RNA sequence: GGGAACGACUCGAGUAGAGUCGAAAAGAGCAAUGGUUACGGAAUGGUAGCAAUACCAUAUCGUGAUCUCUAAUGAGCGUCCUCAUACUGUCCAAGGUGUUCAACCAUUUUACAAUGAAUAUUUAUGACUUGAUCAGCGUUUCGACGCUGAUCAAGUAAAAGAAACAACAACAACAAC
Reactivity to DMS in 0.01 (KOAc 150mM, MgCl2 10mM, bicine 150mM(pH8.5), 24C), signal-to-noise 2, nucleotides 027 to 126: g010a100g030c270a170a080u000g010g000u010u000a030c000g010g020a070a010u000g000g030u010a000g010c300a050a120u010a070c020c000a000u000a030u000c000g000u000g040a010u000c010u000c080u000a130a100u000g050a090g000c040g000u000c000c000u010c130a030u020a110c230u000g000u000c040c020a180a080g010g020u000g020u000u020c030a020a130c180c100a090u000u010u010u010a100c180a040a130u010g000a040a080u040a090u000u030u010a020u030g030
Reactivity to 2A3 in 0.01 (KOAc 150mM, MgCl2 10mM, bicine 150mM(pH8.5), 24C), signal-to-noise 2, nucleotides 027 to 126: g060a000g050c070a030a300u150g030g000u000u000a000c000g000g040a020a000u000g000g020u000a000g040c080a040a040u030a010c010c010a000u060a050u010c000g000u000g020a000u020c080u000c040u120a060a140u180g020a000g020c030g030u000c000c010u000c000a080u040a070c070u040g070u040c020c010a050a050g050g000u000g010u000u090c020a080a060c000c010a060u010u110u030u060a070c090a090a130u090g060a080a040u210a070u130u130u040a120u170g030
An RNA of 177 nucleotides, treated with DMS and 2A3 and read out base by base. Reactivities are given for positions 27 through 126. The RNA was probed in 150 mM KOAc, 10 mM MgCl2 and 150 mM bicine (pH 8.5) at 24 C. For 2A3 the reverse transcriptase was SuperScript II with manganese. DMS adducts were read by reverse transcription with MarathonRT.